Structure probing data (DMS and 2A3) for a 177-nucleotide construct.

RNA sequence: GGGAACGACUCGAGUAGAGUCGAAAAAAACGGUAAGCCAGACUAUCUCAACUCUGCAUUAACACGAGCAAAGGAGCAUGUUGACAUACUAAUCUAUGGAUAUCCACUACUAAAUGUGACAAGAAUAAUGAAUGUGUGAAUUCGUUCACACAUUCAUAAAAGAAACAACAACAACAAC
Reactivity to DMS in 0.01 (KOAc 150mM, MgCl2 10mM, bicine 150mM(pH8.5), 24C), signal-to-noise 4, nucleotides 027 to 126: a040a030a060c080g020g020u000a070a070g020c010c010a050g000a110c080u000a050u010c050u000c030a060a070c110u000c030u010g000c030a100u000u010a090a090c120a070c080g010a080g000c060a050a060a080g000g000a060g010c050a050u000g020u010u010g020a100c050a050u000a040c060u000a110a040u010c080u010a100u000g030g010a090u010a060u000c020c020a070c100u000a060c110u000a040a040a050u010g000u000g000a060c110a040a060g010a060a050u000a090
Reactivity to 2A3 in 0.01 (KOAc 150mM, MgCl2 10mM, bicine 150mM(pH8.5), 24C), signal-to-noise 1, nucleotides 027 to 126: a000a000a000c140g050g000u050a110a000g030c010c030a050g010a140c050u110a050u010c010u020c070a010a140c030u010c050u020g010c010a010u130u160a100a020c050a000c050g090a130g060c040a030a050a100g080g030a040g000c070a060u100g040u050u020g000a010c000a060u110a070c010u060a000a090u010c020u050a050u120g100g000a010u040a020u130c020c000a010c000u050a000c040u050a060a150a120u120g040u070g020a010c010a080a090g150a070a030u220a140

Notes
It was measured as part of the RMDB library OK2TRN.